[RMDB]
RNA sequence: GGGAACGACUCGAGUAGAGUCGAAAAGUAAGUAUACACCGUGUUUUACAAUAGGUUGAUUGCACUAAACAAAGGAGAAAAUCCUUUCUCUGAGGAGCUUACAGUCUAAAGAUACAAGCUGGUGCGGUACAAUAUGGAAUGAGAACAAUAAGUGAGAAGCGUAGUGAGGAUUCGUCCUCACUACGCUAAAAGAAACAACAACAACAAC
Reactivity to 2A3 in 0.01 (KOAc 150mM, MgCl2 10mM, bicine 150mM(pH8.5), 24C), signal-to-noise 1, nucleotides 027 to 156: g020u050a000a200g010u000a000u030a220c060a000c030c030g090u070g030u070u000u000u190a070c080a070a110u060a090g040g060u020u010g080a090u000u090g000c000a030c030u070a030a100a100c010a100a000a020g010g030a090g180a010a090a000a130u060c050c000u000u010u010c060u000c020u020g100a040g000g070a100g100c010u150u020a050c000a060g010u000c000u130a030a030a030g030a010u050a090c030a050a030g000c020u010g000g030u010g000c090g000g080u050a060c050a030a070u050a030u200g050g000a000a070u030g050a080g010a160a000c010a050a230u260a170a050g030u090g050a110g000a120
The data come from the RNA Mapping Database (RMDB), library OK3TST. This 207-nucleotide RNA was probed chemically with 2A3. Reactivities are given for positions 27 through 156. 2A3 is a SHAPE reagent: it acylates the 2'-hydroxyl of flexible nucleotides of all four kinds.